[RMDB]
RNA sequence: GGGAACGACUCGAGUAGAGUCGAAAAGAUAUGGAUGAAUGAUCCGCAUACCACCUUUUGACGCUUCAUGGCUCGGAAACGAGCCACUAGAAGCGAUAAGGUGAUGCGGAUCAUUCAUCCUAAGUCACUACUAGGAACAGUUCGCUGUUCCUAGUAGAAAAGAAACAACAACAACAAC
Reactivity to DMS in 0.01 (KOAc 150mM, MgCl2 10mM, bicine 150mM(pH8.5), 24C), signal-to-noise 4, nucleotides 027 to 126: g000a030u010a300u000g010g000a010u000g010a020a000u000g000a020u000c000c000g030c000a030u000a160c300c000a030c000c000u010u000u010u020g020a300c090g000c010u000u000c000a210u000g020g010c000u000c000g020g000a090a070a200c000g010a020g020c000c000a000c210u000a110g010a020a000g010c000g000a060u010a000a000g010g010u000g030a030u000g000c020g020g000a000u000c010a000u000u010c010a010u000c000c000u010a000a110g010u010c050a250
Structure probing data (DMS) for a 177-nucleotide construct.
Reactivities are rounded to 0.1 and cut off at 0 and 3.
The RNA was probed in 150 mM KOAc, 10 mM MgCl2 and 150 mM bicine (pH 8.5) at 24 C.
DMS adducts were read by reverse transcription with MarathonRT.
Source: RMDB library TTRINS, as collected in RNAgym.